RNA sequence: GGGAACGACUCGAGUAGAGUCGAAAAGUCAUUCAAGGAUUCCACCACAGGAGGAAUGAUCUCAAAAAGGCUGAGCUUGAAUAGAAUGAAAUCCCCAGGUACCCUCAGUCUUAUUCACCAUGCUCAAAGUAAAACAGAGUGACAGCUUAUUGUAUUACUGCAGUGACUAUUUCGAUAGUCACUGCAGAAAAGAAACAACAACAACAAC
Reactivity to 2A3 in 0.01 (KOAc 150mM, MgCl2 10mM, bicine 150mM(pH8.5), 24C), signal-to-noise 1, nucleotides 027 to 156: g030u000c000a000u000u000c000a000a010g010g020a060u020u040c000c000a020c000c040a080c080a110g000g070a050g010g000a110a000u070g160a110u050c080u040c090a060a050a010a000a000g040g000c000u010g000a000g020c000u010u020g020a050a030u060a300g090a010a080u120g020a200a110a060u030c040c080c020c080a050g160g000u120a110c040c000c000u000c010a000g000u020c040u020u000a030u030u090c020a070c060c020a040u100g040c020u000c000a150a200a020g070u100a050a120a000a090c040a000g060a000g110u040g040a030c010a000g050c010u110u220a060u140u210g000u070a100u100u120a030